Annotation
Structure probing data (DMS and 2A3) for a 177-nucleotide construct. The data come from the RNA Mapping Database (RMDB), library TTRDES. DMS adducts were read by reverse transcription with MarathonRT. Conditions: 150 mM KOAc, 10 mM MgCl2 and 150 mM bicine (pH 8.5), 24 C. Values cover nucleotides 27 to 126. 2A3 adducts were read by reverse transcription with SuperScript II with manganese.

RNA sequence: GGGAACGACUCGAGUAGAGUCGAAAAGAUAUGGAUGCCUUGGUAUCAAUAGUAUUCGGAAACGAAUAUACUAUUUCAACGCCAAUGGCAUCCUAAGUCAAACUCGACGUUGUUCGCAACGUCGAGACUUUGAAUUGAGGUUCGCCUCAAUUCAAAGAAAAGAAACAACAACAACAAC
Reactivity to DMS in 0.01 (KOAc 150mM, MgCl2 10mM, bicine 150mM(pH8.5), 24C), signal-to-noise 3, nucleotides 027 to 126: g000a040u000a210u000g000g000a000u000g000c000c000u000u000g000g020u010a110u000c210a010a010u000a010g020u000a020u000u000c000g000g000a080a080a120c000g010a020a040u010a120u000a110c010u000a000u000u000u000c260a170a080c240g000c000c010a000a010u010g010g000c000a000u000c000c000u000a000a070g000u000c030a120a130a150c000u000c000g010a000c000g020u000u010g010u000u010c230g000c000a010a000c000g020u000c000g000a000g000a010
Reactivity to 2A3 in 0.01 (KOAc 150mM, MgCl2 10mM, bicine 150mM(pH8.5), 24C), signal-to-noise 4, nucleotides 027 to 126: g020a000u040a000u060g000g000a000u000g010c010c010u010u000g030g010u100a120u300c140a030a010u010a010g010u000a010u020u010c010g000g000a060a020a000c010g030a030a020u150a050u030a100c000u010a010u040u200u230c210a210a100c290g010c000c010a020a060u230g000g000c010a000u000c000c010u000a000a000g000u010c010a010a050a130c000u000c010g000a000c010g000u010u010g060u060u090c300g000c140a010a000c010g010u010c000g000a000g010a020